An RNA of 177 nucleotides, treated with DMS and 2A3 and read out base by base.
Conditions: 150 mM KOAc, 10 mM MgCl2 and 150 mM bicine (pH 8.5), 24 C.
For 2A3, 946 sequencing reads were counted.
2A3 adducts were read by reverse transcription with SuperScript II with manganese.
RNA sequence: GGGAACGACUCGAGUAGAGUCGAAAACGCUCAGGAGAAGAGCGCAUAGUCGAUCUACUACUGAUCGACAUCUCCAGAUAGCCGCGAAUUAUAUUACAGGGAGGGAAGCGGCAACCCACACCCAUUACCUAGUACCUACCUUCGGGUAGGUACUAGGAAAAGAAACAACAACAACAAC
Reactivity to DMS in 0.01 (KOAc 150mM, MgCl2 10mM, bicine 150mM(pH8.5), 24C), signal-to-noise 2, nucleotides 027 to 126: c010g000c010u000c040a120g010g000a100g000a050a120g000a030g030c010g000c270a010u010a040g000u000c010g020a000u010c010u000a060c280u010a140c300u000g030a000u000c000g020a020c020a030u000c000u000c010c030a300g010a010u010a160g000c000c000g000c030g000a130a130u000u010a120u000a120u010u000a050c140a080g010g000g000a080g010g000g000a110a160g000c010g000g000c000a100a020c020c010c000a160c210a090c020c020c010a180u030u000a180
Reactivity to 2A3 in 0.01 (KOAc 150mM, MgCl2 10mM, bicine 150mM(pH8.5), 24C), signal-to-noise 2, nucleotides 027 to 126: c010g040c000u000c020a020g010g080a050g010a150a050g010a100g000c020g000c090a120u110a060g010u010c000g000a030u010c020u060a120c040u040a020c100u150g000a010u000c000g000a000c020a010u000c020u040c010c000a030g090a240u190a000g000c000c090g000c080g110a060a010u240u100a040u070a010u290u200a060c100a020g040g020g040a030g000g000g080a160a000g000c020g020g030c010a010a030c010c010c010a050c000a020c030c080c000a070u140u170a180